[RMDB]
RNA sequence: GGGAACGACUCGAGUAGAGUCGAAAAGAUAUGGACCAUGUAGGGAGUCGGUCGGAAACGAUGCGACGACGAUCUAUGCAUGGUCCUAAGUCAAACUAGAACAGUGGGUUCGCCCACUGUUCUAGAACCUUGAUCAUCGCUUCGGCGAUGAUCAAGGAAAAGAAACAACAACAACAAC
Reactivity to DMS in 0.01 (KOAc 150mM, MgCl2 10mM, bicine 150mM(pH8.5), 24C), signal-to-noise 1, nucleotides 027 to 126: g020a080u000a300u010g000g010a020c000c000a010u000g050u000a190g010g050g070a180g000u000c000g020g000u000c010g000g010a080a030a090c070g010a010u010g040c000g010a030c000g000a180c160g010a120u010c120u000a090u000g010c010a020u000g010g010u000c000c000u010a000a050g010u000c060a160a170a170c000u000a000g000a000a000c000a010g010u000g000g010g010u000u000c300g020c000c000c000a040c000u000g000u000u000c000u010a010g020a030a100
Reactivity to 2A3 in 0.01 (KOAc 150mM, MgCl2 10mM, bicine 150mM(pH8.5), 24C), signal-to-noise 1, nucleotides 027 to 126: g000a000u020a090u130g000g000a020c010c000a000u020g000u060a000g010g190g000a060g010u010c030g050g090u040c000g010g080a100a150a070c100g050a060u300g300c010g060a030c000g000a030c020g040a140u000c030u130a140u100g070c020a010u010g010g020u020c000c010u000a010a000g000u010c010a020a000a060c000u000a000g000a000a000c000a010g010u010g000g070g020u060u160c240g200c000c000c030a000c000u000g000u030u000c000u000a000g000a000a000